[RMDB]
Source: RMDB library TTRDES, as collected in RNAgym. This 177-nucleotide RNA was probed chemically with DMS and 2A3. The reactions ran in a buffer of 150 mM KOAc, 10 mM MgCl2 and 150 mM bicine (pH 8.5), at 24 C.
RNA sequence: GGGAACGACUCGAGUAGAGUCGAAAAGAUAUGGAGCCAGUUGGGAGCUCCACAUCGGAAACGAUGUGAAGAGCGAAGAACAACGGCUCCUAAGUCAAACGGACGGUAAGUUCGCUUACCGUCCGAAGAAUAUAAUGAACUUCGGUUCAUUAUAUUCAAAAGAAACAACAACAACAAC
Reactivity to DMS in 0.01 (KOAc 150mM, MgCl2 10mM, bicine 150mM(pH8.5), 24C), signal-to-noise 5, nucleotides 027 to 126: g000a010u000a020u020g000g000a000g010c010c000a160g020u000u000g000g020g000a020g040c000u000c000c000a000c000a000u000c000g020g010a010a020a030c010g010a010u000g010u000g000a160a180g010a020g020c010g010a100a210g000a210a250c010a020a010c000g000g010c000u010c000c000u000a000a050g000u000c000a090a140a300c020g000g000a010c000g010g010u000a000a010g000u000u010c290g010c010u000u000a000c000c000g010u000c000c000g000a000a040
Reactivity to 2A3 in 0.01 (KOAc 150mM, MgCl2 10mM, bicine 150mM(pH8.5), 24C), signal-to-noise 4, nucleotides 027 to 126: g000a000u000a000u040g000g000a010g000c030c070a080g030u000u000g000g000g010a010g000c010u010c020c000a000c000a000u000c000g000g030a000a000a000c010g000a010u010g030u030g110a300a200g000a020g010c000g230a300a020g000a010a010c000a010a000c000g000g010c000u000c000c000u000a000a000g000u010c000a060a060a080c000g000g000a000c010g000g010u000a010a010g020u050u170c300g040c140u010u000a000c000c000g000u000c000c000g000a000a000